[RMDB]
RNA sequence: GGGAACGACUCGAGUAGAGUCGAAAAUGGAACCCAAGAUUGCCUAAUGGGACUUCCUAGCACAUUUUUUUUGUGUUGAUCCGUGUAGGAUUGGGAACCCGCCGAAUUGAAACAUCUUAGUAGGCGGCACUUAUAGUGACUUCGGUCACUAUAAGUGAAAAGAAACAACAACAACAAC
Reactivity to DMS in 0.01 (KOAc 150mM, MgCl2 10mM, bicine 150mM(pH8.5), 24C), signal-to-noise 4, nucleotides 027 to 126: u010g010g010a110a150c010c000c000a070a100g000a170u000u020g040c070c040u000a100a100u020g000g010g010a100c080u000u000c020c050u010a050g000c010a000c010a000u000u000u000u000u010u010u000u010g030u010g000u010u000g000a060u000c000c000g010u010g010u010a110g010g000a080u000u000g010g000g010a100a110c140c000c020g010c030c000g000a140a170u000u000g010a040a120a140c170a070u000c040u000u000a070g010u000a090g000g000c010g000g000
Reactivity to 2A3 in 0.01 (KOAc 150mM, MgCl2 10mM, bicine 150mM(pH8.5), 24C), signal-to-noise 3, nucleotides 027 to 126: u080g030g030a040a070c000c000c010a000a030g130a190u180u250g050c010c030u120a110a110u090g010g000g060a100c070u050u010c000c000u040a020g030c000a000c010a040u020u000u030u000u060u120u100u070g010u000g000u010u050g020a020u020c000c000g010u030g130u190a050g000g030a010u010u130g030g000g010a050a060c020c010c010g010c000c010g000a010a020u030u020g040a130a170a130c030a140u040c000u000u000a000g000u000a010g020g010c010g040g020